[RMDB]
RNA sequence: GGGAACGACUCGAGUAGAGUCGAAAAGGAACCAGGUCAUGUUUGUACGUGAUUUGGGCCGACAUCCCCGCCGAAAUAGUCCUGCGAAGAUCUAAGGUCGCUUCUGGAUGGAUUUGCCACCGGGUGCCGCCUACUGAGAAUUCGUUCUCAGUAGGCGAAAAGAAACAACAACAACAAC
Reactivity to 2A3 in 0.01 (KOAc 150mM, MgCl2 10mM, bicine 150mM(pH8.5), 24C), signal-to-noise 5, nucleotides 027 to 126: g030g010a080a180c000c000a000g030g020u000c000a000u020g100u050u170u290g210u300a050c040g000u010g000a000u000u000u010g000g000g000c000c010g010a030c050a090u070c020c010c020c000g000c000c010g040a120a030a020u100a090g020u040c000c010u050g020c020g050a100a020g030a100u050c030u060a070a080g080g020u030c010g000c040u040u050c030u030g090g030a120u040g020g030a050u040u020u160g110c000c000a020c010c030g020g000g010u030g020c000
Reactivity to DMS in 0.01 (KOAc 150mM, MgCl2 10mM, bicine 150mM(pH8.5), 24C), signal-to-noise 2, nucleotides 027 to 126: g000g000a090a080c000c010a000g000g020u000c010a000u030g010u000u080u020g000u050a050c010g010u010g000a000u000u050u010g030g000g010c010c000g000a080c160a150u000c040c000c000c100g060c030c020g000a070a080a120u030a070g010u010c010c000u020g020c080g020a080a100g010a060u040c060u000a070a090g030g000u010c070g000c050u000u020c040u000g000g030a080u020g010g000a180u030u030u000g020c020c050a080c050c050g000g000g010u000g000c120
The data come from the RNA Mapping Database (RMDB), libraries RFM100 and RFMREP. The record gives the reactivity of an RNA of 177 nucleotides to 2A3 and DMS.